[RMDB]
An RNA of 207 nucleotides, treated with 2A3 and DMS and read out base by base. Values cover nucleotides 27 to 156. DMS adducts were read by reverse transcription with MarathonRT. The RNA was probed in 150 mM KOAc, 10 mM MgCl2 and 150 mM bicine (pH 8.5) at 24 C. It was measured as part of the RMDB library OK3TST.

RNA sequence: GGGAACGACUCGAGUAGAGUCGAAAAGUAGGACUUGAGCAUGUGCAGAUUUAGUUACCUGUGGGUGGUCCUGGAACCAAUCACCCUUAUAUACCAAGAGAUGACUAUAUUUUGUUUAUGAUAUAUAGAACCUAAGGUAAUAUGGCUAGAAAAUAGCAUGAUACUUCCAGUUCGCUGGAAGUAUCAUAAAAGAAACAACAACAACAAC
Reactivity to 2A3 in 0.01 (KOAc 150mM, MgCl2 10mM, bicine 150mM(pH8.5), 24C), signal-to-noise 2, nucleotides 027 to 156: g060u050a000g030g010a030c000u030u130g030a020g040c060a060u070g020u120g050c040a020g030a170u060u090u180a060g040u030u020a070c010c010u030g000u070g100g000g000u040g010g030u010c010c040u070g000g050a050a020c020c000a010a010u020c030a070c000c000c000u090u040a150u010a020u000a020c020c010a060a000g080a000g000a200u090g010a060c010u000a000u020a050u100u120u070u050g020u010u150u010a130u200g000a000u000a000u020a000u000a050g020a030a010c020c010u010a050a030g010g020u000a040a000u110a110u100g060g000c000u010a010g060a100a190a060a060u060a020g000c010
Reactivity to DMS in 0.01 (KOAc 150mM, MgCl2 10mM, bicine 150mM(pH8.5), 24C), signal-to-noise 1, nucleotides 027 to 156: g060u000a100g030g030a190c000u000u010g000a140g000c000a050u000g000u000g000c020a060g030a090u010u000u000a150g020u000u000a040c030c000u010g090u000g030g020g000u000g000g010u000c000c020u010g000g010a070a070c030c020a030a060u000c010a080c000c000c000u000u000a070u000a110u000a060c000c010a020a260g000a130g070a050u000g000a160c080u010a060u000a070u000u010u010u000g000u000u010u000a130u040g000a080u010a070u000a040u000a050g000a090a090c020c020u030a070a230g000g000u000a040a080u000a070u000g010g030c010u010a100g000a080a030a080a100u000a080g010c070